[RMDB]
RNA sequence: GGGAACGACUCGAGUAGAGUCGAAAAAGAGCCGACGAACCUUCCAACCUUCCAACCUUCCAACCUUCCAACCUUCCAACCUUCCAAUCUACUCGAGAGGAGGUGGAGGAGGAGGAGGAGGACAUAAAACCUAGGAGACAUUCGUGUCUCCUAGGUUAAAAGAAACAACAACAACAAC
Reactivity to 2A3 in 0.01 (KOAc 150mM, MgCl2 10mM, bicine 150mM(pH8.5), 24C), signal-to-noise 1, nucleotides 027 to 126: a040g100a040g030c040c040g060a050c070g000a050a090c010c020u030u000c020c040a040a040c000c040u040u000c030c020a030a040c030c000u070u000c010c000a090a130c090c010u000u050c000c070a170a140c050c040u120u030c030c010a110a110c000c000u110u000c030c000a000a030u010c020u090a090c050u040c050g030a030g010a040g040g020a010g030g000u030g010g000a030g020g030a030g030g100a000g010g030a010g000g060a010g020g000a010c030a040u220a030a150
Reactivity to DMS in 0.01 (KOAc 150mM, MgCl2 10mM, bicine 150mM(pH8.5), 24C), signal-to-noise 1, nucleotides 027 to 126: a050g020a210g000c020c000g010a070c030g000a150a130c020c010u010u000c000c020a100a150c020c010u010u020c040c050a150a040c020c010u010u010c000c060a120a060c040c000u000u010c000c050a080a070c040c000u010u060c000c020a080a100c050c010u000u030c000c000a120a070u000c000u020a070c110u000c040g000a070g000a290g010g000a020g040g020u000g000g010a100g000g000a130g000g020a120g050g000a210g000g020a100g000g020a260c210a130u000a110a100